[RMDB]
RNA sequence: GGGAACGACUCGAGUAGAGUCGAAAACUGCGGUUAUGAUUAUGUCUACAACCCUUUCUUUGUCGAUGUUCAACAGUGGGGUUAUGUAGGCAAUCUUGCUACUAAUCACGAUCGUUAUUGCUCUGUCACCUUACGAUACCUUCGGGUAUCGUAAGGUAAAAGAAACAACAACAACAAC
Reactivity to 2A3 in 0.01 (KOAc 150mM, MgCl2 10mM, bicine 150mM(pH8.5), 24C), signal-to-noise 1, nucleotides 027 to 126: c010u020g000c010g020g020u000u010a010u040g010a000u000u060a030u130g010u030c010u000a020c000a010a040c000c040c000u000u180u070c000u070u000u010g010u030c040g230a270u210g100u220u080c040a020a070c000a040g000u030g000g000g000g000u000u000a110u160g000u010a000g000g000c000a000a000u070c010u030u120g020c030u050a090c020u020a040a010u010c000a000c060g030a030u040c020g070u060u170a180u140u150g050c000u000c020u080g090u010c030
Reactivity to DMS in 0.01 (KOAc 150mM, MgCl2 10mM, bicine 150mM(pH8.5), 24C), signal-to-noise 1, nucleotides 027 to 126: c140u000g020c080g010g000u000u000a100u000g000a030u000u000a040u000g030u000c020u020a010c020a070a110c000c000c000u010u000u000c020u000u010u000g010u020c060g000a250u010g020u030u000c040a000a000c110a040g020u000g000g000g000g010u000u000a040u000g040u000a010g000g040c000a040a050u010c160u000u000g010c140u010a090c250u000a020a010u000c000a040c030g010a020u000c030g040u000u010a090u000u000g000c080u000c010u010g000u010c160
The data come from the RNA Mapping Database (RMDB), library 15KREP. The record gives the reactivity of an RNA of 177 nucleotides to 2A3 and DMS. DMS adducts were read by reverse transcription with MarathonRT. The RNA was probed in 150 mM KOAc, 10 mM MgCl2 and 150 mM bicine (pH 8.5) at 24 C. 2A3 is a SHAPE reagent: it acylates the 2'-hydroxyl of flexible nucleotides of all four kinds. Values cover nucleotides 27 to 126.